Source: RMDB library 15KREP, as collected in RNAgym. Chemical mapping of a 177-nucleotide RNA with 2A3 and DMS. 2A3 adducts were read by reverse transcription with SuperScript II with manganese. Reactivities are given for positions 27 through 126. For DMS, 2,584 sequencing reads were counted.

RNA sequence: GGGAACGACUCGAGUAGAGUCGAAAAGCCCCUCGCUCGUAUCUCCGAGAGGAGACGAGAAGGAGGUGGAUCUCCCUUUGCCAUCCGAGGGGAUUGCGUCCUCCUUACGGAUGCCCAGGUCGGACCGGUACUGUAUGCAGUUCGCUGCAUACAGUACAAAAGAAACAACAACAACAAC
Reactivity to 2A3 in 0.01 (KOAc 150mM, MgCl2 10mM, bicine 150mM(pH8.5), 24C), signal-to-noise 3, nucleotides 027 to 126: g000c000c000c000c000u010c010g020c000u010c000g060u090a160u040c010u000c000c010g040a050g000a070g080g000a000g000a010c010g010a000g020a030a090g180g010a030g000g070u300g040g030a060u040c040u070c040c010c000u030u110u070g060c010c000a010u000c000c010g010a030g000g020g010g000a010u010u180g060c060g080u000c000c010u050c010c000u030u080a050c020g010g000a010u000g010c000c010c000a060g000g020u040c010g000g020a030c030c010g050
Reactivity to DMS in 0.01 (KOAc 150mM, MgCl2 10mM, bicine 150mM(pH8.5), 24C), signal-to-noise 3, nucleotides 027 to 126: g000c010c010c000c030u000c040g020c000u010c010g020u010a140u010c000u000c000c010g010a300g010a290g000g000a030g010a030c010g010a000g020a090a060g000g000a010g010g000u010g020g000a110u010c090u000c030c010c000u000u000u000g010c130c020a020u000c010c000g010a220g030g000g020g000a050u000u000g020c140g000u000c010c000u000c030c060u010u010a090c050g010g010a020u000g010c100c020c030a080g020g010u000c020g010g000a200c000c040g010